Chemical mapping of a 207-nucleotide RNA with 2A3 and DMS.
RNA sequence: GGGAACGACUCGAGUAGAGUCGAAAAGAGAAGAAAACCACAUGGUAAAAAUGUAAUCAACCAGUGGGAUUCUUUUAGUUCAUAAUUGUAAUCAUAGAUGGCAUUCCACUACCUUUGUCUUCCAUCUGGACCAAGUAUGGCUGUGUCUAGAGGUUCAAUGGUGAUUUAAUUUCGAUUAAAUCACCAUAAAAGAAACAACAACAACAAC
Reactivity to 2A3 in 0.01 (KOAc 150mM, MgCl2 10mM, bicine 150mM(pH8.5), 24C), signal-to-noise 3, nucleotides 027 to 156: g070a000g000a020a000g010a000a010a010a010c010c020a030c060a230u030g030g010u130a090a060a020a190a180u180g130u210a130a200u120c040a030a020c000c000a000g010u000g000g000g000a010u020u010c000u020u030u030u040a070g000u060u070c020a050u110a230a120u110u120g030u150a070a050u080c040a030u040a060g050a050u060g060g030c020a010u050u000c020c000a020c020u040a030c000c020u030u110u170g030u020c040u070u040c030c020a110u020c050u060g010g000a020c020c030a060a020g030u030a100u130g070g030c020u020g020u020g010u070c020u010a050g000a050g090g010u070u140c070a040
Reactivity to DMS in 0.01 (KOAc 150mM, MgCl2 10mM, bicine 150mM(pH8.5), 24C), signal-to-noise 1, nucleotides 027 to 156: g000a130g010a070a050g010a060a010a080a300c010c000a040c050a060u010g040g010u010a050a130a090a120a120u000g020u010a160a190u000c050a190a070c000c000a050g020u010g010g010g000a230u000u000c010u000u000u000u000a070g020u000u000c020a030u000a000a070u010u010g000u000a110a120u000c050a070u010a070g020a040u020g000g010c060a140u010u010c010c040a040c020u000a030c070c030u000u000u000g010u000c020u010u000c020c040a100u010c060u000g020g000a060c030c050a040a090g000u010a060u010g020g030c170u000g010u000g030u000c030u000a140g020a080g030g020u000u000c020a140
The reactions ran in a buffer of 150 mM KOAc, 10 mM MgCl2 and 150 mM bicine (pH 8.5), at 24 C. Source: RMDB library OK3TST, as collected in RNAgym. Values are in units of 0.01, from 0 to 300, in steps of 10.